The record gives the reactivity of an RNA of 177 nucleotides to 2A3 and DMS. Source: RMDB library TTRDEL, as collected in RNAgym. The DMS profile rests on 2,533 reads. The 2A3 profile rests on 3,904 reads.
[RMDB]
RNA sequence: GGGAACGACUCGAGUAGAGUCGAAAAGAUAUGGACCAUUCAUCGAUCAUAAUGUGUCGGAAACGACAUUAUGGGAGACUGGUCCUAAGUCAAAAGCCUAGCGUGUUCUUCGGAACACGCUAGGCAACUGCUUACUAACGUUCGCGUUAGUAAGCAGAAAAGAAACAACAACAACAAC
Reactivity to 2A3 in 0.01 (KOAc 150mM, MgCl2 10mM, bicine 150mM(pH8.5), 24C), signal-to-noise 3, nucleotides 027 to 126: g000a010u070a040u180g010g010a020c020c000a040u100u110c140a170u160c050g120a090u100c030a000u030a060a000u120g230u090g180u190c020g020g000a060a030a020c010g020a010c020a010u010u010a000u000g030g040g000a080g010a000c020u020g000g000u010c010c000u010a080a020g080u010c030a100a020a030a070g000c020c000u000a010g000c020g000u000g020u020u010c020u070u050c300g040g000a010a000c030a000c010g020c010u000a000g000g020c010a000a010
Reactivity to DMS in 0.01 (KOAc 150mM, MgCl2 10mM, bicine 150mM(pH8.5), 24C), signal-to-noise 3, nucleotides 027 to 126: g010a050u010a300u020g000g010a010c000c000a010u020u010c110a160u010c050g010a300u010c010a000u000a010a010u010g000u000g010u010c000g000g000a070a060a120c010g000a060c000a010u000u000a010u000g010g000g000a300g000a020c170u000g000g000u000c000c000u000a000a070g010u000c030a060a060a100a100g000c000c000u010a020g000c000g030u000g000u000u000c010u000u010c180g010g010a000a000c000a000c010g000c000u000a000g000g020c000a010a000